[RMDB]
RNA sequence: GGGAACGACUCGAGUAGAGUCGAAAAGAGACAGAGUAACAGGUGCGAUCCCAGGAUACUUGGAAGUCGGCAUGAUCAGUCAUCUCUGAGGACCUCCCAUGCACUCUGGGCUGCUGCAUCACCACCAUACCGUAAACCGUUUCGACGGUUUACGGUAAAAAGAAACAACAACAACAAC
Reactivity to DMS in 0.01 (KOAc 150mM, MgCl2 10mM, bicine 150mM(pH8.5), 24C), signal-to-noise 2, nucleotides 027 to 126: g000a110g010a130c040a060g000a050g020u000a110a070c110a070g000g000u010g020c070g030a110u000c040c020c030a040g010g060a030u010a120c040u020u000g010g010a110a100g000u000c070g040g010c110a070u020g000a050u020c080a070g040u010c110a020u010c060u000c020u010g000a090g000g010a040c060c040u000c030c030c020a100u000g000c300a050c010u010c030u000g010g010g030c040u000g000c030u010g000c070a070u000c050a090c070c000a140c090c120a140
Reactivity to 2A3 in 0.01 (KOAc 150mM, MgCl2 10mM, bicine 150mM(pH8.5), 24C), signal-to-noise 1, nucleotides 027 to 126: g040a000g010a010c020a000g000a000g030u020a250a000c020a050g000g030u060g030c020g080a100u000c000c020c000a000g030g000a020u050a050c040u110u170g000g040a020a040g020u070c100g050g160c090a100u170g040a080u230c020a010g040u020c040a040u020c080u000c010u020g050a250g060g000a020c000c040u070c000c030c010a020u200g000c060a020c020u050c010u020g040g070g000c050u070g010c000u000g050c040a020u050c040a070c040c000a040c030c020a050
Chemical mapping of a 177-nucleotide RNA with DMS and 2A3. The 2A3 profile rests on 1,211 reads. For 2A3 the reverse transcriptase was SuperScript II with manganese. It was measured as part of the RMDB library OK2TST. The DMS profile rests on 1,188 reads. Values are in units of 0.01, from 0 to 300, in steps of 10.